[RMDB]
RNA sequence: GGGAACGACUCGAGUAGAGUCGAAAAUCGUCCUCGAGUUUCUUGAUGGUUCUCCUGCUCUUCCGGAGCUUUCUUUCGAGGUCUUCCGCGUCUUUUCUUGCUUGGAUCCAUUUCUCGAGGACGUCCUGUACGUUUAUUAGUUCGCUAAUAAACGUACAAAAGAAACAACAACAACAAC
Reactivity to DMS in 0.01 (KOAc 150mM, MgCl2 10mM, bicine 150mM(pH8.5), 24C), signal-to-noise 3, nucleotides 027 to 126: u020c010g010u000c000c000u000c010g010a030g000u010u000u020c160u020u010g010a050u000g000g000u000u010c060u000c050c040u000g000c030u000c130u000u000c120c070g000g010a060g010c020u000u000u000c040u000u010u000c120g010a030g000g010u000c060u010u000c000c010g010c150g020u010c060u000u000u010u000c120u000u010g000c040u000u000g010g000a040u000c030c020a040u010u000u010c010u000c000g020a020g010g010a040c020g010u000c020c010u000
Reactivity to 2A3 in 0.01 (KOAc 150mM, MgCl2 10mM, bicine 150mM(pH8.5), 24C), signal-to-noise 6, nucleotides 027 to 126: u060c000g000u010c000c000u000c010g010a020g010u100u170u110c120u230u240g030a020u020g000g030u090u050c040u030c030c010u010g010c010u020c020u130u030c030c030g020g010a020g000c000u040u120u010c010u050u220u120c090g020a010g010g030u020c030u090u010c020c000g030c060g050u050c050u060u170u090u040c070u110u080g020c020u040u070g000g010a020u030c010c000a010u060u060u020c010u000c000g000a000g000g000a000c000g000u000c000c000u000